Structure probing data (2A3) for a 177-nucleotide construct.
Conditions: 150 mM KOAc, 10 mM MgCl2 and 150 mM bicine (pH 8.5), 24 C.
Values cover nucleotides 27 to 126.
2A3 adducts were read by reverse transcription with SuperScript II with manganese.
For 2A3, 612 sequencing reads were counted.
The data come from the RNA Mapping Database (RMDB), library RFM100.

RNA sequence: GGGAACGACUCGAGUAGAGUCGAAAACGGGCGCUGCGCCUGCCCCCAGAUCUCCAUCGGAAUGCAGAAAACAUCUUAGAAAAAAAGUAGUUUGAAUUCCUGAAUGAUUUUUCCUGUAGAAAGGGGCGAGCUGGUCCUUAUUCGUAAGGACCAGCUCAAAAGAAACAACAACAACAAC
Reactivity to 2A3 in 0.01 (KOAc 150mM, MgCl2 10mM, bicine 150mM(pH8.5), 24C), signal-to-noise 2, nucleotides 027 to 126: c000g030g000g000c010g000c150u210g010c030g010c000c010u020g000c000c000c000c010c000a030g000a030u050c070u070c060c000a030u050c040g000g060a010a010u070g030c000a010g050a040a090a050a010c040a070u070c050u110u130a130g200a110a220a000a090a000a000a000g060u170a020g030u000u000u020g080a010a010u030u030c000c000u080g010a240a100u030g010a000u030u000u000u000u040c000c030u000g050u050a070g090a120a080a010g020g040g000g010c000